[RMDB]
RNA sequence: GGGAACGACUCGAGUAGAGUCGAAAAGCGACGCUCACGGGCGCGGUCUUUGGUACGCGUGCGGUCGUCAACAACGUUGCUAACGGGGGUGACUAAUUAUCGUCACCGCCGAGGAGCUUACGGUUGCGAUAAAGUCAGAAGGUGUGAGUGAGACACACCCCAAAAGGGGAUUCGUCCCCUUUUGGGGAAAAGAAACAACAACAACAAC
Reactivity to 2A3 in 0.01 (KOAc 150mM, MgCl2 10mM, bicine 150mM(pH8.5), 24C), signal-to-noise 1, nucleotides 027 to 156: g050c030g020a040c050g000c040u050c070a130c090g050g000g000c060g000c000g030g030u050c010u000u020u070g040g000u010a000c000g020c020g040u150g090c010g000g000u030c010g040u100c010a010a000c010a010a030c000g000u020u010g030c000u070a080a070c010g010g000g030g020g000u000g000a000c010u050a190a210u190u200a220u300c040g000u000c000a000c000c000g000c030c000g000a060g010g020a000g000c040u030u000a000c010g040g040u030u000g030c030g030a030u120a120a020a000g040u160c030a050g040a070a060g000g050u080g000u020g000a020g000u030g000a000g060a000c030a000c020a010
Notes
An RNA of 207 nucleotides, treated with 2A3 and read out base by base. It was measured as part of the RMDB library OK3TST. For 2A3, 731 sequencing reads were counted.